[RMDB]
Overview:
Source: RMDB libraries RFM100 and RFMREP, as collected in RNAgym. Structure probing data (DMS and 2A3) for a 177-nucleotide construct. Reactivities are given for positions 27 through 126. For DMS the reverse transcriptase was MarathonRT. For 2A3 the reverse transcriptase was SuperScript II with manganese.
RNA sequence: GGGAACGACUCGAGUAGAGUCGAAAACCUACAGACCGCGAUAACCUCGGGAAACUGAGGCCAAUAGCGGAUAUCACUCUCAUGCUGGAGUGCAGAGAGUGAGAAACGUUCCGGCGCUGUAGGAUGUGAUCUCAAUAGACUUCGGUCUAUUGAGAUCAAAAGAAACAACAACAACAAC
Reactivity to DMS in 0.01 (KOAc 150mM, MgCl2 10mM, bicine 150mM(pH8.5), 24C), signal-to-noise 3, nucleotides 027 to 126: c000c000u000a010c020a000g000a110c010c010g000c060g010a050u010a290a300c000c000u000c000g000g000g000a090a110a170c000u000g000a010g000g010c000c030a100a090u040a100g010c000g010g010a080u000a060u000c000a010c010u000c010u020c020a130u010g050c000u000g000g040a180g020u000g000c000a000g010a010g010a020g010u010g000a010g000a050a100a050c070g020u010u000c080c050g000g000c060g020c020u000g000u000a000g000g000a080u030g000u010
Reactivity to 2A3 in 0.01 (KOAc 150mM, MgCl2 10mM, bicine 150mM(pH8.5), 24C), signal-to-noise 9, nucleotides 027 to 126: c000c000u000a000c000a000g020a020c000c010g060c110g080a030u030a090a040c010c000u000c000g020g000g010a020a010a000c010u010g000a000g010g050c010c020a150a090u130a060g040c020g000g000a000u030a000u000c000a000c000u000c000u000c030a300u030g000c030u120g130g300a240g080u150g030c000a000g000a000g000a000g000u000g000a000g000a010a060a010c020g010u040u030c030c070g070g010c170g000c080u000g000u000a000g010g010a030u080g100u040